[RMDB]
RNA sequence: GGGAACGACUCGAGUAGAGUCGAAAAUUGCUCUUAUUGUUAAUAGCUGUAUAUUUGAUUUCAGUUCAUGGAAAGCUAAGUACAGUAUCUGACAUGAAAGAAUAAUUCAGUAUCCAUGGGUCAAGAAGCUGAAUAAAUGAAUACCUUAGAAAAGGAAGCCAUAGUAUCCUUUCGAGGAUACUAUGGCAAAAGAAACAACAACAACAAC
Reactivity to 2A3 in 0.01 (KOAc 150mM, MgCl2 10mM, bicine 150mM(pH8.5), 24C), signal-to-noise 2, nucleotides 027 to 156: u050u050g030c000u000c000u050u070a110u100u040g000u020u100a150a170u060a170g000c030u020g070u030a030u020a060u100u090u030g030a020u010u020u020c030a040g070u060u120c090a100u100g080g010a010a050a000g070c030u040a000a030g000u000a000c010a000g000u040a060u010c090u030g050a010c010a050u030g010a080a060a040g030a010a060u160a140a000u070u000c010a010g030u010a070u090c020c010a040u080g010g060g000u090c040a080a040g050a050a000g030c000u000g030a050a010u050a060a080a020u080g020a040a020u160a210c010c000u030u070a050g110a120a080a010a000g010g050a110a000
Reactivity to DMS in 0.01 (KOAc 150mM, MgCl2 10mM, bicine 150mM(pH8.5), 24C), signal-to-noise 1, nucleotides 027 to 156: u000u000g010c060u000c070u000u000a140u000u000g010u000u020a090a140u000a170g090c010u000g010u000a000u000a140u000u000u010g020a130u000u010u000c000a110g000u000u010c240a150u000g000g000a040a050a050g000c010u000a030a120g000u000a030c000a050g030u000a040u000c070u010g030a040c020a070u020g010a220a070a030g000a070a080u000a060a100u000u010c000a080g000u000a080u000c020c000a060u010g010g000g000u000c080a100a100g000a060a300g000c030u000g000a050a080u000a040a100a120u000g030a100a090u000a030c010c010u020u000a050g000a110a100a070a090g010g030a110a300